Annotation:
Structure probing data (2A3) for a 207-nucleotide construct. The 2A3 profile rests on 600 reads.
RNA sequence: GGGAACGACUCGAGUAGAGUCGAAAAGACCAAUAACAGAAUGCACCACAGCGUAAAAUCAUCUGAUUGGGUGAGUUGGUCGCACCGCCAUUUGACGAACGAACGCCAAGCCUAAGCCGUCUUUGUUAACACGAGCUAGUCUUCGGACUAGCUCGAACCGCAUUAUCAUCUUCGGAUGAUAAUGCGGAAAAGAAACAACAACAACAAC
Reactivity to 2A3 in 0.01 (KOAc 150mM, MgCl2 10mM, bicine 150mM(pH8.5), 24C), signal-to-noise 1, nucleotides 027 to 156: g020a000c010c000a090a000u220a080a010c050a060g080a170a080u150g000c010a060c000c000a040c090a070g040c020g080u120a000a100a070a120u110c060a020u010c080u010g130a130u170u250g060g060g000u020g000a050g010u030u040g080g000u000c010g000c090a030c000c010g000c000c020a060u140u110u030g060a040c030g000a080a020c010g030a060a010c020g000c010c010a010a010g000c000c060u050a060a080g080c010c040g020u050c010u000u040u090g030u000u090a100a060c110a010c030g010a030g000c000u000a000g000u000c000u000u050c140g110g000a040c000u000a000g000c000u000c010g000a000a000